[RMDB]
RNA sequence: GGGAACGACUCGAGUAGAGUCGAAAAGCUCGGCCUUUCGAGGCCGAGCAGACGCCGUUUCCCUAGGCUAUAGGCUAAAUUAAAACACAAGCUGAAACACAACUGCUGAACAUUUCGAUGUUCAGAACAGUAGGCUAAACUUCGGUUUAGCCUACUGAAAAGAAACAACAACAACAAC
Reactivity to DMS in 0.01 (KOAc 150mM, MgCl2 10mM, bicine 150mM(pH8.5), 24C), signal-to-noise 2, nucleotides 027 to 126: g050c000u000c020g000g030c010c010u020u000u010c200g010a020g000g000c010c000g000a010g000c010a000g000a080c190g050c000c020g000u000u010u000c000c000c010u020a140g010g000c010u000a160u000a100g020g010c010u000a050a060a120u000u000a050a110a100a100c200a070c200a080a050g010c010u000g020a140a100a070c080a080c120a100a040c170u000g010c000u000g010a010a020c000a000u000u000u010c150g010a030u000g000u000u000c000a010g000a050a130
Reactivity to 2A3 in 0.01 (KOAc 150mM, MgCl2 10mM, bicine 150mM(pH8.5), 24C), signal-to-noise 2, nucleotides 027 to 126: g020c000u000c000g000g010c000c020u130u150u080c230g060a000g030g000c000c010g000a000g010c000a000g020a000c030g060c020c040g000u010u030u000c020c010c010u030a010g000g060c000u020a040u090a090g040g000c010u030a030a080a280u170u130a110a120a240a000c100a010c040a090a030g000c000u020g020a030a070a020c060a000c010a080a200c120u130g000c000u000g070a000a000c000a030u080u050u160c180g080a000u000g000u010u000c010a000g000a020a020